[RMDB]
RNA sequence: GGGAACGACUCGAGUAGAGUCGAAAAUUGUCUGGUUUAAACUCUAUCUGGAGGAAUUCAAGCUAGACUUCAGGAAUAACUUCUUGAGGCAAGGAUUUUGAGACCUUAGGGAAAGAAGGACGUCUUGGGGGUAUUCUGACUGUUGUCCUCCUGGAAGCCACUAUGGGGUAUUCGUACCCCAUAGUGGAAAAGAAACAACAACAACAAC
Reactivity to 2A3 in 0.01 (KOAc 150mM, MgCl2 10mM, bicine 150mM(pH8.5), 24C), signal-to-noise 1, nucleotides 027 to 156: u150u060g010u040c080u100g080g000u030u090u070a200a230a060c010u000c010u010a220u120c100u130g000g000a010g000g050a030a020u240u160c100a050a020g030c000u040a010g010a170c000u030u010c060a000g020g050a050a020u050a000a130c010u040u010c010u010u060g030a050g070g150c140a020a040g040g000a130u090u140u230u300g060a080g110a120c000c000u000u070a140g090g000g000a000a010a020g010a000a000g010g000a000c160g010u060c000u010u000g060g050g000g000g020u050a050u170u000c090u010g170a180c000u000g100u090u100g060u060c000c000u020c000c000u030g040g010a030a070g030
Overview: The record gives the reactivity of an RNA of 207 nucleotides to 2A3. The RNA was probed in 150 mM KOAc, 10 mM MgCl2 and 150 mM bicine (pH 8.5) at 24 C. Source: RMDB library OK3TST, as collected in RNAgym.